[RMDB]
RNA sequence: GGGAACGACUCGAGUAGAGUCGAAAAAUUUCAGCGGAACAAGUGGGCGCUUGGAGUUCAGUUCGCGGAUCAGAAAGGCUUGUUUGUCCGCUUCAGACCAGCUUUCAUAAUCACCGAGGCCCAGAUACCUCUCUCUUAUUUUCGAAUAAGAGAGAGGAAAAGAAACAACAACAACAAC
Reactivity to DMS in 0.01 (KOAc 150mM, MgCl2 10mM, bicine 150mM(pH8.5), 24C), signal-to-noise 4, nucleotides 027 to 126: a080u010u000u000c070a060g030c020g000g000a050a070c070a070a090g030u000g010g010g010c030g030c040u010u010g010g010a150g020u020u000c060a130g020u000u010c100g020c090g010g010a030u010c100a090g010a110a040a050g010g000c030u000u000g010u000u000u000g000u000c040c070g000c070u000u000c040a060g010a040c020c030a050g020c050u000u000u000c050a050u000a100a040u000c070a100c050c030g010a070g010g000c010c010c010a110g000a120u010a110
Reactivity to 2A3 in 0.01 (KOAc 150mM, MgCl2 10mM, bicine 150mM(pH8.5), 24C), signal-to-noise 3, nucleotides 027 to 126: a000u120u140u080c050a040g010c010g040g010a150a060c020a060a120g140u090g030g080g000c240g060c170u030u080g040g020a080g030u080u080c030a020g020u070u070c070g010c080g080g000a020u070c020a040g100a070a040a010g090g020c000u020u000g050u030u060u040g020u060c040c060g000c000u040u050c010a010g010a010c010c000a010g010c000u010u030u050c070a120u090a230a090u070c020a010c060c020g010a010g040g010c020c020c000a010g010a030u100a050
Chemical mapping of a 177-nucleotide RNA with DMS and 2A3. For 2A3, 3,225 sequencing reads were counted. The data come from the RNA Mapping Database (RMDB), library OK2TRN. DMS (dimethyl sulfate) methylates the pairing face of unpaired adenines and cytosines. 2A3 adducts were read by reverse transcription with SuperScript II with manganese.